[RMDB]
Description: An RNA of 207 nucleotides, treated with 2A3 and DMS and read out base by base. High DMS reactivity at an A or C suggests that its Watson-Crick edge is free. For DMS, 3,663 sequencing reads were counted. Reactivities are given for positions 27 through 156. The reactions ran in a buffer of 150 mM KOAc, 10 mM MgCl2 and 150 mM bicine (pH 8.5), at 24 C. 2A3 adducts were read by reverse transcription with SuperScript II with manganese. It was measured as part of the RMDB library RNAMAK. DMS adducts were read by reverse transcription with MarathonRT. The 2A3 profile rests on 6,427 reads.
RNA sequence: GGGAACGACUCGAGUAGAGUCGAAAACGCUGGGAAUGUAAGAGCGGGAGCUCUCUGAAGCGCGCACGGAGAGCUUUGAUCGAAUCUUAACAUUCCUGUGCUGAAGCGCGCACGGCAACCGAAAGGUGCGAAGACGUGAAAGUUCGCUUUCACGUAACUAGAUCCAUAGAUUCGUCUAUGGAUCUAGAAAAGAAACAACAACAACAAC
Reactivity to 2A3 in 0.01 (KOAc 150mM, MgCl2 10mM, bicine 150mM(pH8.5), 24C), signal-to-noise 5, nucleotides 027 to 156: c040g000c020u030g010g000g000a000a000u000g000u020a050a010g020a040g150c150g040g070g040a010g000c010u000c000u000c010u030g050a240a110g010c000g000c000g000c010a020c020g010g000a000g000a000g020c010u040u040u050g090a090u090c070g060a120a060u040c020u070u040a100a050c000a000u000u000c000c000u020g040u040g000c040u080g030a120a040g000c010g000c010g010c010a000c010g030g000c020a090a110c020c010g030a110a050a030g000g000u010g020c020g040a070a030g130a040c000g000u000g010a000a000a000g030u070u180c170g000c140u000u000u000c000a000c000g000u000a010a030
Reactivity to DMS in 0.01 (KOAc 150mM, MgCl2 10mM, bicine 150mM(pH8.5), 24C), signal-to-noise 2, nucleotides 027 to 156: c100g000c050u000g010g010g000a030a010u000g010u000a080a040g010a060g000c070g030g000g020a070g020c010u000c000u000c010u000g000a030a070g010c010g020c040g020c050a300c050g000g010a040g000a050g000c000u000u000u030g040a140u010c130g000a100a150u000c020u000u000a070a080c010a060u000u000c000c020u000g050u000g030c000u000g010a070a100g020c010g010c000g020c010a200c050g010g010c040a110a090c020c000g000a080a140a150g000g000u010g020c070g000a090a110g020a020c000g040u000g000a020a030a000g010u010u000c300g000c000u020u000u000c000a000c020g040u000a030a120